Chemical mapping of a 177-nucleotide RNA with 2A3 and DMS. Values cover nucleotides 27 to 126. For 2A3 the reverse transcriptase was SuperScript II with manganese.

RNA sequence: GGGAACGACUCGAGUAGAGUCGAAAAGAACGCCAAGAGGCGAGACCGAGACCGAGAAUCACGCUAGCUCGGAAAAGUGGCAUAGCGUCAGGAGUCCACUCUCGGAAAAGCCGAAAGAACGGCAGAAGCUAGUGAUGCUCUUCGGAGCAUCACUAGCAAAAGAAACAACAACAACAAC
Reactivity to 2A3 in 0.01 (KOAc 150mM, MgCl2 10mM, bicine 150mM(pH8.5), 24C), signal-to-noise 1, nucleotides 027 to 126: g000a000a000c000g020c000c020a100a050g040a100g100g000c040g010a000g040a000c000c000g000a000g080a050c040c040g000a000g000a080a020u110c000a040c040g030c000u020a100g000c000u140c050g000g000a140a000a000a000g000u080g020g000c010a190u040a170g020c020g110u040c020a100g050g150a060g090u000c000c000a000c000u000c000u000c010g000g010a000a010a010a010g000c000c030g000a090a000a000g010a030a020c080g000g000c030a000g010a070a000
Reactivity to DMS in 0.01 (KOAc 150mM, MgCl2 10mM, bicine 150mM(pH8.5), 24C), signal-to-noise 1, nucleotides 027 to 126: g000a090a060c290g000c000c000a130a000g000a300g000g000c000g000a050g000a040c000c000g050a000g030a090c020c110g000a120g010a060a060u000c070a200c000g030c000u000a060g000c000u030c120g000g000a040a170a100a020g050u130g010g060c230a000u000a000g000c000g000u000c250a140g060g000a300g000u030c000c000a060c000u000c000u000c000g050g000a070a190a040a200g050c000c000g000a030a000a030g000a090a080c060g000g040c000a090g020a300a010
Background:
Source: RMDB library OK1LIB, as collected in RNAgym.